RNA sequence: GGGAACGACUCGAGUAGAGUCGAAAAAUUCGACCGACCUCGUGCCGGUCGUGCAGGGCGAGAAGAUCAACGUCGUCGGGAAGUUGUUCUACGAGAACCUCGUCGCCAGCGGCGACCCGAUCGUGCUCGGAUUGACCACCUACGCCGACAGGUUCGGGUGGUGUAUGAGAUUCGUCUCAUACACCACAAAAGAAACAACAACAACAAC
Reactivity to 2A3 in 0.01 (KOAc 150mM, MgCl2 10mM, bicine 150mM(pH8.5), 24C), signal-to-noise 3, nucleotides 027 to 156: a000u100u000c010g010a000c030c010g030a040c000c030u100c130g140u220g100c030c030g000g030u010c000g000u020g000c040a080g000g050g000c010g000a040g020a050a040g000a070u070c050a070a040c060g020u020c020g010u020c020g070g010g030a100a080g020u020u050g010u050u000c050u050a070c080g070a030g010a190a030c010c020u040c100g040u000c010g030c050c020a070g080c000g010g010c000g000a010c020c010c010g020a040u050c060g040u120g050c020u000c000g010g020a050u070u090g130a140c030c000a020c010c000u060a070c050g080c070c000g000a010c000a040g020g000u060u060c000g020g000
Reactivity to DMS in 0.01 (KOAc 150mM, MgCl2 10mM, bicine 150mM(pH8.5), 24C), signal-to-noise 1, nucleotides 027 to 156: a270u000u000c000g010a010c000c020g000a050c010c010u000c160g030u000g030c020c020g000g000u000c020g030u000g000c070a160g010g020g020c000g000a110g010a230a070g010a050u000c000a100a070c010g020u000c000g050u000c030g000g000g030a080a180g010u000u000g010u010u000c000u000a180c020g030a140g010a010a070c020c010u000c030g040u000c060g020c060c050a170g000c020g020g010c020g000a070c040c000c060g000a030u000c010g050u000g020c100u000c050g000g010a140u010u000g000a190c010c020a100c010c040u010a080c070g040c030c000g020a110c090a090g000g000u000u000c050g000g060

This 207-nucleotide RNA was probed chemically with 2A3 and DMS. Source: RMDB library OK3TST, as collected in RNAgym. Conditions: 150 mM KOAc, 10 mM MgCl2 and 150 mM bicine (pH 8.5), 24 C. DMS adducts were read by reverse transcription with MarathonRT.